[RMDB]
Source: RMDB library OK1LIB, as collected in RNAgym.
This 177-nucleotide RNA was probed chemically with DMS and 2A3.
For 2A3, 158,466 sequencing reads were counted.
The DMS profile rests on 64,223 reads.

RNA sequence: GGGAACGACUCGAGUAGAGUCGAAAAUUUCAGCGUACUAGCGAAUUGAUGUUAGAUGGAUAGCAAUGACUGUAGGCUAUCCAAUGUGUGCAAAUCGCACAAUACGCUGAACUACAGUCAUGCGUACGAUCAUCGUGUUAUUCGUAAUGUGAUGAUCAAAAGAAACAACAACAACAAC
Reactivity to DMS in 0.01 (KOAc 150mM, MgCl2 10mM, bicine 150mM(pH8.5), 24C), signal-to-noise 9, nucleotides 027 to 126: u030u010u000c000a000g000c010g020u000a050c010u000a010g000c010g010a140a160u050u040g010a100u050g020u000u000a010g010a230u000g010g010a010u000a010g010c010a040a040u010g010a010c000u000g010u000a020g000g000c000u000a000u000c000c000a010a010u010g010u010g010u000g000c150a090a120a160u060c100g000c000a010c010a030a080u000a010c000g000c000u000g000a010a020c150u000a010c000a000g000u000c000a100u050g020c160g010u040a110c180
Reactivity to 2A3 in 0.01 (KOAc 150mM, MgCl2 10mM, bicine 150mM(pH8.5), 24C), signal-to-noise 9, nucleotides 027 to 126: u020u010u000c000a000g000c000g000u000a010c000u010a000g010c020g160a120a200u190u230g140a180u300g050u010u000a020g010a070u010g000g000a000u000a000g000c020a040a060u100g000a000c000u000g000u000a000g040g000c000u000a000u000c000c000a000a000u010g000u000g000u000g010c060a070a040a160u300c040g000c000a000c000a000a010u010a000c000g000c000u000g000a010a000c000u010a000c000a000g000u000c010a020u120g050c020g070u080a030c030
The RNA was probed in 150 mM KOAc, 10 mM MgCl2 and 150 mM bicine (pH 8.5) at 24 C.